[RMDB]
Background
Chemical mapping of a 177-nucleotide RNA with 2A3 and DMS. For 2A3, 1,088 sequencing reads were counted. For DMS the reverse transcriptase was MarathonRT.
RNA sequence: GGGAACGACUCGAGUAGAGUCGAAAAGUACUUAAUCUUAACCAGCGUACCGUCAGCAGCAUUAUGACGUCGCGCCACGAUAUUGAGCAUAUCGAUCUCAACGCGCCGGAAGAAGAAAUCCGCCAGACCUGAGUAGGGUAUUCGUACCCUACUCAGGAAAAGAAACAACAACAACAAC
Reactivity to 2A3 in 0.01 (KOAc 150mM, MgCl2 10mM, bicine 150mM(pH8.5), 24C), signal-to-noise 1, nucleotides 027 to 126: g030u050a080c080u160u180a040a120u010c010u100u050a060a000c000c000a020g030c030g020u020a100c070c010g000u000c050a050g040c050a000g000c020a180u040u110a120u290g020a000c000g000u000c040g000c030g000c020c010a030c020g000a000u000a060u030u150g050a060g040c110a020u010a020u160c040g030a090u050c010u010c040a030a060c030g000c000g000c050c080g080g020a030a020g030a020a040g030a030a170a040u020c040c060g010c010c030a060g060a120
Reactivity to DMS in 0.01 (KOAc 150mM, MgCl2 10mM, bicine 150mM(pH8.5), 24C), signal-to-noise 2, nucleotides 027 to 126: g000u000a130c030u000u010a130a060u010c030u000u000a100a120c090c020a160g010c030g020u000a110c120c010g000u000c020a100g000c080a140g030c070a100u020u000a120u020g000a100c050g000u000c050g000c090g030c010c200a100c160g010a020u000a030u000u010g010a040g000c200a090u010a050u030c020g000a120u010c010u000c030a070a250c050g010c020g030c040c000g010g010a100a080g000a040a110g000a100a140a110u000c060c020g020c070c050a050g020a180
The RNA was probed in 150 mM KOAc, 10 mM MgCl2 and 150 mM bicine (pH 8.5) at 24 C. Reactivities are given for positions 27 through 126.